[RMDB]
RNA sequence: GGGAACGACUCGAGUAGAGUCGAAAAGCUGAGUUUUGAUGGUAUCAUGCAUCAAAGACUGAGUAGGAUACCUCAGUCACUCAGCCUGGACAGUAUGCGUCUCUGGAUCACUACAGAGACCAUUGUGCAGUGAUCCACAAUGGCAUACAGACGUUGACGAUCCAUGAUAGUUCGCUAUCAUGGAUCGAAAAGAAACAACAACAACAAC
Reactivity to DMS in 0.01 (KOAc 150mM, MgCl2 10mM, bicine 150mM(pH8.5), 24C), signal-to-noise 1, nucleotides 027 to 156: g000c000u010g000a020g010u000u000u010u030g020a060u000g020g000u010a050u000c090a110u010g010c010a080u000c000a050a060a160g030a170c050u000g010a300g040u010a070g020g030a100u010a050c250c000u000c010a080g050u000c110a110c010u000c000a000g030c000c050u010g000g010a080c060a140g000u000a030u000g000c010g000u010c070u020c030u020g010g010a140u000c050a090c050u010a020c010a050g010a270g010a120c220c110a000u020u030g040u000g020c080a100g060u030g000a010u000c000c000a090c070a010a070u000g000g000c030a020u000a060c010a080g010a070c070g020u030u000g000a300
Reactivity to 2A3 in 0.01 (KOAc 150mM, MgCl2 10mM, bicine 150mM(pH8.5), 24C), signal-to-noise 3, nucleotides 027 to 156: g000c000u010g010a000g030u070u060u040u050g040a040u150g010g050u180a080u210c060a090u140g030c020a060u010c010a050a170a050g090a100c080u020g000a000g010u040a060g140g040a070u100a060c000c010u010c010a000g070u060c020a020c000u000c000a000g000c000c010u040g010g030a030c030a040g010u010a000u000g010c000g060u040c010u000c070u230g000g020a020u040c000a030c030u100a050c050a010g160a030g070a170c120c000a130u140u110g020u070g020c020a000g000u020g020a010u010c010c000a030c110a010a090u160g120g000c010a000u010a030c010a000g080a050c120g050u000u010g000a060
Source: RMDB library OK3TST, as collected in RNAgym. Structure probing data (DMS and 2A3) for a 207-nucleotide construct. The reactions ran in a buffer of 150 mM KOAc, 10 mM MgCl2 and 150 mM bicine (pH 8.5), at 24 C. For DMS, 1,766 sequencing reads were counted.